An RNA of 177 nucleotides, treated with DMS and 2A3 and read out base by base. High 2A3 reactivity points to a flexible backbone, as in loops and unpaired stretches.
RNA sequence: GGGAACGACUCGAGUAGAGUCGAAAACAAGCGCGUUUUGUGCACAGGAUGUUUGGAGAAACAAAGCGCGCGGGGUCAGCGGCAGCGUAGGUCGCCUCCUGUGCGGCCGCCGGGAUGUUGCCUGGCCUCUAGUGAUCGGGUUCGCUCGGUCGCUAGAAAAAGAAACAACAACAACAAC
Reactivity to DMS in 0.01 (KOAc 150mM, MgCl2 10mM, bicine 150mM(pH8.5), 24C), signal-to-noise 9, nucleotides 027 to 126: c060a080a110g000c000g010c000g010u000u000u000u000g010u000g010c030a020c010a020g010g010a230u040g010u020u030u050g010g010a120g010a240a170a020c000a000a010a010g000c000g010c000g010c000g000g000g000g010u000c010a010g000c080g000g000c000a040g000c060g010u020a080g020g010u000c160g000c010c030u010c000c010u000g000u010g000c000g010g000c000c060g000c050c000g000g010g010a090u020g010u000u000g000c070c010u000g000g000c010c000
Reactivity to 2A3 in 0.01 (KOAc 150mM, MgCl2 10mM, bicine 150mM(pH8.5), 24C), signal-to-noise 9, nucleotides 027 to 126: c050a040a050g000c000g000c000g000u000u000u000u000g020u020g010c020a000c000a010g030g020a080u150g280u260u300u300g300g010a190g060a030a050a000c000a000a000a000g000c000g000c000g000c000g000g000g000g000u010c010a010g030c050g100g000c010a020g010c040g060u100a120g010g000u020c010g000c000c000u020c000c000u010g000u010g000c000g000g000c000c020g000c000c000g000g020g060a140u110g000u020u010g000c000c000u000g000g000c000c000
For 2A3 the reverse transcriptase was SuperScript II with manganese. Values cover nucleotides 27 to 126. The 2A3 profile rests on 67,221 reads.